An RNA of 177 nucleotides, treated with DMS and 2A3 and read out base by base. The reactions ran in a buffer of 150 mM KOAc, 10 mM MgCl2 and 150 mM bicine (pH 8.5), at 24 C. 2A3 adducts were read by reverse transcription with SuperScript II with manganese. It was measured as part of the RMDB library OK1LIB. High 2A3 reactivity points to a flexible backbone, as in loops and unpaired stretches.
RNA sequence: GGGAACGACUCGAGUAGAGUCGAAAAGUGCGUGGUCUUCCUAGCUUUUCGAUGGUUGAAGUCGAACGUGAAACCUGUUAGUUAGGACAGUUACGAAGUUGUAGCUAGUGCCAACUACCACGCUGAAGAUAUAGAGUCAAUUCGUUGGUUCUAUAUCAAAAGAAACAACAACAACAAC
Reactivity to DMS in 0.01 (KOAc 150mM, MgCl2 10mM, bicine 150mM(pH8.5), 24C), signal-to-noise 9, nucleotides 027 to 126: g020u010g010c010g010u000g000g000u010c110u010u000c020c000u000a050g010c030u010u020u010u010c030g010a040u010g010g020u030u020g010a160a230g010u010c080g010a040a130c300g000u010g000a100a040a040c090c040u010g000u010u010a030g010u000u010a040g000g000a030c190a020g000u000u000a020c040g010a110a120g010u030u040g010u000a030g010c010u010a070g020u020g000c030c030a060a030c030u000a070c000c000a000c000g010c000u010g000a120a120
Reactivity to 2A3 in 0.01 (KOAc 150mM, MgCl2 10mM, bicine 150mM(pH8.5), 24C), signal-to-noise 9, nucleotides 027 to 126: g120u090g000c010g010u000g010g010u030c030u030u030c010c010u010a020g000c020u040u050u030u040c040g080a090u110g080g120u130u140g110a110a040g050u060c050g050a060a040c050g040u080g040a040a020a020c010c010u030g030u050u010a040g010u020u020a030g020g020a030c050a030g010u030u040a020c060g080a220a090g080u200u260g020u060a010g000c010u030a040g030u030g090c000c000a010a010c000u010a010c000c010a000c010g000c010u010g030a050a020